[RMDB]
RNA sequence: GGGAACGACUCGAGUAGAGUCGAAAAAUACAAGGGGAGGUUUCGGCCAAAUGUUGUAUGCAGAAAGCGUGAGGAAGGUAGCACUUAGACACUCACGGGUAGCGGUUCGGCAGUAGUGCUAAAAUGAGACAGUACGAAAAGUUCGCUUUUCGUACAACAUUCCUAUGCGGUUCGCCGCAUAGGAAUGAAAAGAAACAACAACAACAAC
Reactivity to DMS in 0.01 (KOAc 150mM, MgCl2 10mM, bicine 150mM(pH8.5), 24C), signal-to-noise 2, nucleotides 027 to 156: a140u010a040c060a060a070g030g000g000g020a100g020g000u000u000u000c060g040g060c020c030a090a080a070u000g000u000u000g030u000a110u010g000c020a140g000a070a060a090g020c030g030u000g000a030g000g030a110a030g020g010u010a090g010c040a080c050u000u010a160g010a110c060a090c020u000c010a070c070g010g000g030u000a020g020c060g000g020u000u000c020g020g020c080a090g010u000a040g020u020g010c010u000a050a070a060a070u010g000a110g010a090c040a120g030u000a030c000g000a020a000a030a020g040u000u010c300g050c010u000u000u000u000c000g020u010a000c000a060a090
Reactivity to 2A3 in 0.01 (KOAc 150mM, MgCl2 10mM, bicine 150mM(pH8.5), 24C), signal-to-noise 3, nucleotides 027 to 156: a010u140a010c010a030a050g020g020g000g010a060g010g020u010u070u100c050g050g000c010c020a000a120a060u140g020u060u020g020u010a060u040g000c000a020g060a090a090a000g040c060g040u070g000a030g020g050a010a030g060g010u040a010g000c020a020c060u030u080a020g020a080c070a010c070u000c000a010c020g000g000g000u020a010g020c040g020g050u080u090c020g020g000c010a020g020u090a010g010u010g020c020u060a040a040a030a030u110g000a030g030a040c080a080g020u020a000c010g010a000a000a000a000g020u060u050c130g080c080u000u000u000u000c000g000u000a000c000a000a000
An RNA of 207 nucleotides, treated with DMS and 2A3 and read out base by base. The 2A3 profile rests on 2,031 reads. DMS (dimethyl sulfate) methylates the pairing face of unpaired adenines and cytosines.